RNA sequence: GGGAACGACUCGAGUAGAGUCGAAAAUGGAACAUCUGUGUCACGCCCUGUGCUCCCAAGACUUAUGACUCAUCGUGGAAGAAGGGGCAGAAUGACUGAGAGCCAGAGGUAGUGGACAUCUGGCAAAACGUUGUUCUCCAGAUAUGACAAGGCUGUACAUUUAAUGCUACUUCGGUAGCAUUAAAUGAAAAGAAACAACAACAACAAC
Reactivity to DMS in 0.01 (KOAc 150mM, MgCl2 10mM, bicine 150mM(pH8.5), 24C), signal-to-noise 3, nucleotides 027 to 156: u000g040g010a060a090c050a090u000c030u000g020u000g020u010c050a050c090g040c010c010c000u000g010u010g050c030u000c000c010c010a050a100g000a080c070u000u010a080u020g010a110c110u000c060a100u000c020g030u000g010g020a120a060g010a150a160g020g010g020g020c060a070g010a080a030u000g010a120c030u000g010a190g020a240g010c010c000a030g010a050g040g030u000a090g060u000g020g030a120c060a110u030c010u000g000g020c020a050a060a070a120c130g020u000u000g010u000u010c020u010c040c000a090g010a080u000a090u010g010a100c050a100a100g000g020c030u000g020u000a220
Reactivity to 2A3 in 0.01 (KOAc 150mM, MgCl2 10mM, bicine 150mM(pH8.5), 24C), signal-to-noise 8, nucleotides 027 to 156: u130g020g010a070a020c020a070u050c040u060g090u020g030u090c030a020c070g010c000c000c010u040g060u150g040c010u020c010c000c010a060a040g040a050c040u140u170a100u300g040a080c020u030c090a100u070c110g090u150g070g040a050a060g040a050a020g030g000g000g000c010a010g020a010a030u050g020a020c020u040g020a020g010a010g100c020c010a010g020a050g020g070u150a140g050u100g070g050a020c010a080u010c020u010g010g010c020a020a070a000a020c050g000u010u010g000u020u020c010u000c020c010a020g020a050u090a080u120g070a050c040a080a040g110g000c030u040g030u090a020
This 207-nucleotide RNA was probed chemically with DMS and 2A3.
The RNA was probed in 150 mM KOAc, 10 mM MgCl2 and 150 mM bicine (pH 8.5) at 24 C.
It was measured as part of the RMDB library OK3TST.